[RMDB]
RNA sequence: GGGAACGACUCGAGUAGAGUCGAAAACGGAUCAACUUCGGUUGAUCCGAAAGGGAGGGGUCGGGAGGGGGAUACUCGCGGUCCCAAGAAGAAUCCAGACUGAAAGGAAGGUCUUCGGACCUUCCAACAACUAAGAAGUGUUCGCACUUCUUAGUUGAAAAGAAACAACAACAACAAC
Reactivity to DMS in 0.01 (KOAc 150mM, MgCl2 10mM, bicine 150mM(pH8.5), 24C), signal-to-noise 2, nucleotides 027 to 126: c040g010g010a020u000c000a000a000c000u020u020c160g040g000u000u000g020a000u000c000c000g040a020a050a150g010g010g000a190g010g000g000g000u010c070g000g030g000a070g000g010g030g010g000a020u000a000c050u010c050g010c050g000g000u000c000c000c010a010a090g000a110a060g000a100a050u000c040c040a090g000a110c100u000g020a110a100a090g000g000a030a020g010g000u000c010u000u000c230g000g010a010c000c000u000u000c000c010a020a050
Reactivity to 2A3 in 0.01 (KOAc 150mM, MgCl2 10mM, bicine 150mM(pH8.5), 24C), signal-to-noise 3, nucleotides 027 to 126: c000g000g000a000u000c000a000a010c010u060u050c110g110g000u000u000g010a010u000c000c010g000a020a010a000g030g050g120a260g010g030g010g040u140c070g020g040g070a220g040g010g040g010g000a020u070a070c020u020c020g020c020g030g030u020c030c010c000a000a010g050a010a000g030a020a020u050c050c030a020g100a090c060u120g070a110a060a040g020g000a000a000g000g000u000c000u020u070c170g040g000a000c000c000u010u000c000c000a000a000